[RMDB]
RNA sequence: GGGAACGACUCGAGUAGAGUCGAAAACGCGCGAUAGAGCGGCAGGAGCAGCUGCGCAAGGAGGAGGCGGCGCGCGAGGCCCAGGAGCGGCUGCUGCGGGAGGAGCGCGACCGCGAGGCCGCCCGCGACGUAAUCCACUGUUCGCAGUGGAUUACGUAAAAGAAACAACAACAACAAC
Reactivity to 2A3 in 0.01 (KOAc 150mM, MgCl2 10mM, bicine 150mM(pH8.5), 24C), signal-to-noise 2, nucleotides 027 to 126: c000g040c010g030c010g080a100u080a190g200a040g060c040g000g000c020a010g060g060a080g020c050a040g010c010u080g020c040g000c060a070a060g100g060a070g010g030a070g090g000c070g000g000c000g000c000g000c000g020a090g140g080c040c010c020a030g070g010a070g000c050g130g000c100u170g000c020u120g050c060g010g050g000a070g030g050a130g050c080g000c050g080a090c020c000g010c000g000a030g040g000c000c010g000c000c010c000g000c020g010
Reactivity to DMS in 0.01 (KOAc 150mM, MgCl2 10mM, bicine 150mM(pH8.5), 24C), signal-to-noise 2, nucleotides 027 to 126: c060g000c020g030c050g010a160u010a100g020a130g030c020g000g000c010a120g040g000a110g020c070a080g020c040u000g020c030g030c150a090a110g010g000a070g000g000a160g000g000c020g000g030c020g000c010g010c020g000a300g000g000c020c000c000a140g000g020a140g040c000g000g020c110u030g010c030u010g030c050g000g000g000a060g010g020a300g000c040g020c010g000a050c030c010g000c020g010a100g030g000c010c030g000c000c020c050g010c100g020